[RMDB]
RNA sequence: GGGAACGACUCGAGUAGAGUCGAAAAUAAUGAUAUAUUGGCAGCAACAGACCCCAGUGAGGCUUUCGAGAAAUUCGUAAGUCUCUUUGCUACUUUAAUGACUUUUUCUGGUAAUGUAGAUCUUGAUGACGAACCCGGUUCGCCGGGUUCAAAAGAAACAACAACAACAAC
Reactivity to 2A3 in 0.01 (KOAc 150mM, MgCl2 10mM, bicine 150mM(pH8.5), 24C), signal-to-noise 2, nucleotides 027 to 129: u090a000a020u100g150a010u000a090u100a020u150u000g080g000c000a070g000c000a000a040c060a000g090a030c000c000c000c000a040g030u000g010a000g000g000c000u000u000u060c000g000a000g070a020a290a130u090u000c000g010u010a000a000g000u000c000u020c060u030u030u030g000c000u000a020c000u090u120u120a040a120u090g070a070c050u120u050u050u110u250c080u080g140g000u000a120a120u130g010u000a000g030a120u020c060u030u040g060a000u090g000a020c210
Reactivity to DMS in 0.01 (KOAc 150mM, MgCl2 10mM, bicine 150mM(pH8.5), 24C), signal-to-noise 3, nucleotides 027 to 129: u030a030a030u090g000a110u010a100u040a100u000u020g030g030c030a050g020c000a000a000c130a070g030a120c000c030c000c020a120g010u030g000a050g040g040c080u030u000u020c000g000a020g020a170a180a160u000u000c000g020u010a000a030g000u000c050u010c020u000u040u000g060c030u010a100c080u070u000u000a060a170u020g000a100c060u090u050u020u030u070c040u010g040g010u010a080a080u020g030u000a030g030a060u050c060u050u050g010a070u040g030a070c150

The record gives the reactivity of an RNA of 170 nucleotides to 2A3 and DMS. The 2A3 profile rests on 1,914 reads. The DMS profile rests on 6,025 reads. Conditions: 150 mM KOAc, 10 mM MgCl2 and 150 mM bicine (pH 8.5), 24 C. DMS adducts were read by reverse transcription with MarathonRT. 2A3 adducts were read by reverse transcription with SuperScript II with manganese.